[RMDB]
RNA sequence: GGGAACGACUCGAGUAGAGUCGAAAAAUAAACCGCGUAGGGAACCAAGCCUUGAGUUCUGGACACCCACGGUACAAGGCUUGGUUCUAGACAUGUGGGUCUCCAGUCCCACUCCCUACGCCAAAAACUACAGUAUCAGUUUCGACUGAUACUGUAGAAAAGAAACAACAACAACAAC
Reactivity to 2A3 in 0.01 (KOAc 150mM, MgCl2 10mM, bicine 150mM(pH8.5), 24C), signal-to-noise 4, nucleotides 027 to 126: a000u060a020a080a010c030c010g000c000g000u000a000g020g000g010a010a010c000c000a000a000g000c000c010u140u040g120a190g160u200u100c020u030g040g060a040c010a130c060c030c020a050c110g030g000u040a020c000a000a000g000g000c000u000u000g000g000u000u000c000u000a000g000a010c070a110u230g000u000g020g000g000u010c040u030c030c010a050g040u060c010c010c000a000c040u050c000c000c000u000a000c000g000c000c000a030a110a030a010a020
Reactivity to DMS in 0.01 (KOAc 150mM, MgCl2 10mM, bicine 150mM(pH8.5), 24C), signal-to-noise 5, nucleotides 027 to 126: a070u000a070a110a110c130c100g010c010g010u000a010g010g000g010a060a020c010c000a010a010g010c010c000u000u000g010a160g020u010u010c020u000g000g010a110c190a120c080c050c080a080c080g000g000u010a130c010a020a010g010g010c000u000u000g000g000u000u000c040u010a040g010a090c220a050u000g010u000g000g000g000u000c120u000c140c110a160g000u010c010c000c000a030c010u000c030c010c000u000a010c000g010c010c150a030a030a060a070a050